[RMDB]
RNA sequence: GGGAACGACUCGAGUAGAGUCGAAAACUUGCGAAUAAUGCAACAUUGGGUGGUCAUGUAGAAAUCGACGAUUUUGCCAUUAUUGGUGGAAUGACUGCUAUCCAUCAAUUCUGCGUGAUUGGUGCGCUCGUAUUGUGUAAUUCGUUACACAAUACGAAAAAGAAACAACAACAACAAC
Reactivity to DMS in 0.01 (KOAc 150mM, MgCl2 10mM, bicine 150mM(pH8.5), 24C), signal-to-noise 9, nucleotides 027 to 126: c080u000u000g010c020g010a110a100u010a110a070u010g000c030a040a060c150a090u000u000g010g010g030u000g010g000u000c050a050u010g000u010a070g010a040a060a060u000c070g010a100c130g000a080u000u000u000u000g010c030c020a040u010u010a110u010u010g000g020u000g000g000a100a050u000g010a090c080u000g000c050u000a120u000c040c010a020u010c030a010a030u000u000c050u010g010c130g030u010g010a110u000u000g000g010u000g010c060g010c120
Reactivity to 2A3 in 0.01 (KOAc 150mM, MgCl2 10mM, bicine 150mM(pH8.5), 24C), signal-to-noise 9, nucleotides 027 to 126: c010u030u060g000c010g030a190a110u220a200a090u260g010c010a030a020c010a120u090u140g120g000g010u040g020g020u030c030a030u080g060u120a060g090a120a090a040u090c060g110a100c060g020a070u020u020u030u130g040c020c020a040u120u150a100u170u170g030g000u010g010g040a060a030u060g030a050c020u030g010c010u070a090u030c010c000a010u030c010a010a050u070u010c030u100g070c030g060u080g040a090u030u080g040g020u130g020c040g010c020